[RMDB]
RNA sequence: GGGAACGACUCGAGUAGAGUCGAAAAUUCGUUUAUUCACUGGGGACGACAGCUCUGGGGAGAAAAGGGAGGAUCGGAUGGGAAGAGUAUAUCCUACGGGAAUCCACUGGAACCUCUGAUGUCCAGUUCCCUUAGUAAUGUUCGCAUUACUAAGGGAAAAAGAAACAACAACAACAAC
Reactivity to DMS in 0.01 (KOAc 150mM, MgCl2 10mM, bicine 150mM(pH8.5), 24C), signal-to-noise 2, nucleotides 027 to 126: u000u010c090g000u000u000u000a080u020u010c090a100c060u010g010g020g000g050a050c070g010a080c100a070g010c070u000c020u000g040g000g000g010a090g000a040a050a060a070g020g000g010a060g030g010a170u020c020g010g020a120u010g010g010g010a050a080g010a130g020u000a120u020a050u000c020c010u000a120c080g020g010g000a200a070u020c050c050a030c010u000g010g000a100a080c060c050u000c040u010g010a060u000g020u010c000c040a060g000u000
Reactivity to 2A3 in 0.01 (KOAc 150mM, MgCl2 10mM, bicine 150mM(pH8.5), 24C), signal-to-noise 2, nucleotides 027 to 126: u040u030c020g000u000u110u180a170u110u220c080a050c070u020g010g000g000g070a000c000g060a040c050a020g020c020u010c040u070g000g000g000g040a070g070a000a060a010a000g040g000g000a060g010g000a020u030c050g000g100a070u100g060g030g010a070a020g080a030g140u040a060u020a030u190c000c000u010a040c030g010g020g000a020a060u060c020c020a060c080u040g040g010a050a070c010c030u060c100u140g010a040u070g040u030c010c000a000g020u000